[RMDB]
RNA sequence: GGGAACGACUCGAGUAGAGUCGAAAAGGAAACAAAAGUGUUAUUAGGAGUCCUGCUGUCACAGUGGUUUGAGCAUCCUGAGCCCUGAGGCUGUUUCUGGUGGUGGACCUCCUCCUCCUCAGUAGGGGAUCAGCUGCACAUUCGUGUGCAGCUGAUCAAAAGAAACAACAACAACAAC
Reactivity to DMS in 0.01 (KOAc 150mM, MgCl2 10mM, bicine 150mM(pH8.5), 24C), signal-to-noise 2, nucleotides 027 to 126: g000g060a090a070a090c150a000a180a020a150g040u060g000u030u030a070u000u070a040g000g000a100g000u060c020c050u000g070c050u000g000u010c090a000c080a090g070u020g030g090u030u000u000g000a100g040c120a070u000c070c050u000g000a100g000c130c000c020u070g010a120g000g000c080u000g000u000u000u000c050u010g000g020u020g040g000u000g000g010a110c160c110u000c040c000u010c010c000u000c030c050u010c080a110g020u000a090g000g060g000
Reactivity to 2A3 in 0.01 (KOAc 150mM, MgCl2 10mM, bicine 150mM(pH8.5), 24C), signal-to-noise 1, nucleotides 027 to 126: g030g060a050a050a000c100a000a110a030a030g170u200g000u150u100a180u040u130a030g010g010a000g020u030c000c000u010g010c030u010g050u070c010a030c030a080g050u030g110g060u040u260u070g030a000g000c010a070u020c000c000u000g000a000g000c000c000c010u030g080a090g030g000c000u000g010u020u120u000c000u050g000g000u020g000g090u020g030g070a000c010c030u000c030c000u000c000c000u010c000c000u070c070a080g010u060a030g070g000g000